[RMDB]
RNA sequence: GGGAACGACUCGAGUAGAGUCGAAAAAUGGAAUGAUGUACUUAAUCUUGCUAAUAAUCAUGAGUUUGAAGUUACAACUCAACAUGGUGUUACUUUGAAUGUUGUCAGUAGGCGUUUAGAAGGUGCAGACAACAAGAAUCUUCGGAUUCUUGUUGUCAAAAGAAACAACAACAACAAC
Reactivity to DMS in 0.01 (KOAc 150mM, MgCl2 10mM, bicine 150mM(pH8.5), 24C), signal-to-noise 3, nucleotides 027 to 126: a070u010g020g020a070a050u010g020a150u000g020u000a080c060u010u010a100a080u000c020u000u000g010c060u000a060a050u010a070a050u010c120a040u010g000a080g010u010u000u000g000a060a060g010u000u010a050c080a030a080c040u010c130a070a080c200a070u000g010g010u000g000u000u000a040c070u000u000u000g000a020a030u010g020u000u010g000u000c070a030g010u010a090g000g000c070g010u000u020u000a060g030a100a060g000g020u000g000c090a100
Reactivity to 2A3 in 0.01 (KOAc 150mM, MgCl2 10mM, bicine 150mM(pH8.5), 24C), signal-to-noise 2, nucleotides 027 to 126: a000u130g010g030a050a090u100g090a060u080g060u030a040c010u040u020a060a030u070c010u020u030g020c000u030a110a060u050a060a040u210c090a070u100g050a010g030u000u060u020g020a070a000g020u020u050a040c050a130a060c060u000c160a050a110c050a100u200g000g000u030g010u000u070a050c030u020u000u050g040a040a070u100g040u130u070g030u080c010a020g000u020a010g040g000c040g030u050u070u000a070g010a050a040g000g050u060g000c000a030